Overview
This 177-nucleotide RNA was probed chemically with DMS and 2A3. Conditions: 150 mM KOAc, 10 mM MgCl2 and 150 mM bicine (pH 8.5), 24 C. It was measured as part of the RMDB library OK2TRN. High 2A3 reactivity points to a flexible backbone, as in loops and unpaired stretches. For DMS, 2,885 sequencing reads were counted.
RNA sequence: GGGAACGACUCGAGUAGAGUCGAAAAUGAUUAUGGUGAAUAAGCUUUUUGAUAUGCUGCUGGAUUCAGUUUGCCAGUAUUUUAUUGAGGAUUUUUGCAUCAAUGUUCAUCAGGAAUAUUGGCCUGAGACCCUGGUAAUAUUCGUAUUACCAGGGUCAAAAGAAACAACAACAACAAC
Reactivity to DMS in 0.01 (KOAc 150mM, MgCl2 10mM, bicine 150mM(pH8.5), 24C), signal-to-noise 2, nucleotides 027 to 126: u010g000a060u010u010a050u000g000g040u000g010a140a020u000a080a060g010c040u000u000u010u010u010g000a070u000a030u000g010c060u000g010c020u000g000g010a050u000u010c140a110g000u020u000u010g000c010c010a030g020u000a000u000u010u000u010a050u030u000g000a100g000g000a050u000u000u000u010u000g010c120a120u000c080a050a090u000g010u000u000c010a060u000c040a040g020g000a040a030u000a030u000u000g000g000c020c100u010g000a190
Reactivity to 2A3 in 0.01 (KOAc 150mM, MgCl2 10mM, bicine 150mM(pH8.5), 24C), signal-to-noise 2, nucleotides 027 to 126: u080g020a020u070u040a050u120g050g000u080g060a040a040u080a070a030g000c000u090u110u020u010u110g030a020u020a040u190g040c010u000g000c010u000g020g030a030u110u120c070a120g190u140u260u150g030c020c000a010g000u010a040u010u070u000u030a080u040u060g030a010g010g040a030u110u020u060u020u300g050c030a010u140c010a070a120u080g010u060u030c010a060u000c030a060g100g000a050a000u070a030u100u120g030g000c050c020u080g000a050